[RMDB]
RNA sequence: GGGAACGACUCGAGUAGAGUCGAAAAUCACCGUGUUCGCACGGUGAAAAAAGCGUACUACGUAGUGGUAUGGGAGGAGGAUUCCCAAAUAGGAAUCAGCUCCGAAGAACAUACGUAACAUCUACGUAUCGCAAAAACCGGCUCUUCGGAGCCGGAACUAUCAGUGAAACUUCGGUUUCACUGAUAGAAAAGAAACAACAACAACAAC
Reactivity to 2A3 in 0.01 (KOAc 150mM, MgCl2 10mM, bicine 150mM(pH8.5), 24C), signal-to-noise 3, nucleotides 027 to 156: u020c000a000c010c000g010u010g040u020u080c250g020c100a010c020g020g010u000g000a040a010a000a000a000a000g020c040g040u110a100c020u000a000c040g010u000a000g020u020g040g000u000a010u000g000g000g030a050g000g000a010g010g010a000u000u000c000c040c000a120a190a080u200a060g000g010a010a000u000c020a100g210c010u000c010c020g020a090a020g010a010a000c000a000u010a010c010g050u040a060a060c030a200u120c020u010a000c000g010u010a060u300c040g000c030a000a100a000a000a000c000c000g030g000c000u000c010u020u100c280g080g000a000g020c000c000g010g000a000a010
Reactivity to DMS in 0.01 (KOAc 150mM, MgCl2 10mM, bicine 150mM(pH8.5), 24C), signal-to-noise 3, nucleotides 027 to 156: u000c010a010c010c000g030u000g030u000u020c300g060c020a020c000g010g000u000g000a010a030a050a090a040a160g000c010g030u010a090c090u000a040c010g000u000a020g020u010g030g000u000a030u000g000g000g020a230g020g020a090g040g000a090u000u000c000c010c020a050a080a190u010a060g010g020a040a010u000c020a120g030c000u000c010c010g000a140a120g020a130a190c010a050u000a020c030g030u000a060a110c100a090u000c030u000a020c000g020u000a020u000c030g000c010a050a060a020a150a110c030c000g020g000c010u000c020u000u000c200g040g000a030g020c000c000g000g010a000a010